[RMDB]
RNA sequence: GGGAACGACUCGAGUAGAGUCGAAAAACACCAAAACUGAAAACGGAAGGCAAUCCUUCCACGACGAUACUUACUUUCCUUUGAUCGUCGUUACUACUGGCAUAGCUACAAAGGAGAACAAACAUGAGCGCGGACACUGACUUCGGUCAGUGUCCAACAGCUACGGAAAGUUCGCUUUCCGUAGCUGAAAAGAAACAACAACAACAAC
Reactivity to 2A3 in 0.01 (KOAc 150mM, MgCl2 10mM, bicine 150mM(pH8.5), 24C), signal-to-noise 2, nucleotides 027 to 156: a000c070a120c000c040a040a060a000a110c110u160g030a120a090a000a000c050g000g040a010a000g060g000c080a030a200u290c000c000u000u000c000c000a000c000g000a000c000g000a000u180a240c030u040u060a030c000u080u130u060c010c000u020u020u060g030a000u010c000g010u030c000g010u000u060a050c080u030a030c050u030g030g000c040a190u060a060g050c000u040a050c090a010a050a000g000g010a020g000a040a000c030a110a080a020c030a090u150g080a040g150c110g000c100g050g000a000c000a020c000u000g000a000c000u010u040c090g010g000u000c000a000g000u000g010u000c000c000a000a000

Annotation: Structure probing data (2A3) for a 207-nucleotide construct. It was measured as part of the RMDB library M2RFPK. Conditions: 150 mM KOAc, 10 mM MgCl2 and 150 mM bicine (pH 8.5), 24 C.